[RMDB]
RNA sequence: GGGAACGACUCGAGUAGAGUCGAAAAUGAUGAGCAUGGCCGUUCUUAGGUGUAAGCCCUGCCGGUUGUCUUGAUAGACAAAAUUUUACCGAGACUUGUAAUAGCCAAAAGCAGGCAGCAGGCGAGUAGUACCUAAAAAGUUCGCUUUUUAGGUACUAAAAGAAACAACAACAACAAC
Reactivity to DMS in 0.01 (KOAc 150mM, MgCl2 10mM, bicine 150mM(pH8.5), 24C), signal-to-noise 4, nucleotides 027 to 126: u020g010a090u010g010a190g000c040a050u010g010g020c020c030g010u000u000c040u010u000a110g020g010u000g010u010a060a090g010c080c010c010u000g020c030c020g000g000u000u000g010u000c010u000u000g020a140u010a040g010a040c070a060a040a080a150u010u000u010u020a140c030c010g010a070g010a170c030u000u000g000u000a050a080u010a080g010c100c170a070a090a070a180g000c030a030g010g010c020a120g010c020a040g020g000c030g000a160g020u010
Reactivity to 2A3 in 0.01 (KOAc 150mM, MgCl2 10mM, bicine 150mM(pH8.5), 24C), signal-to-noise 3, nucleotides 027 to 126: u080g040a020u070g010a000g030c050a050u060g040g020c020c020g060u070u000c040u060u060a120g070g040u060g010u080a030a050g050c010c000c010u010g010c000c030g050g000u030u060g010u010c000u040u170g110a090u150a090g030a010c030a010a140a050a090u140u150u080u090a030c040c000g030a050g030a080c020u010u030g030u070a040a040u030a140g040c020c000a000a100a000a000g020c010a010g020g000c010a010g000c020a010g030g000c000g000a010g010u030
Chemical mapping of a 177-nucleotide RNA with DMS and 2A3. Source: RMDB library RFMREP, as collected in RNAgym. For DMS, 3,641 sequencing reads were counted. DMS adducts were read by reverse transcription with MarathonRT. The reactions ran in a buffer of 150 mM KOAc, 10 mM MgCl2 and 150 mM bicine (pH 8.5), at 24 C.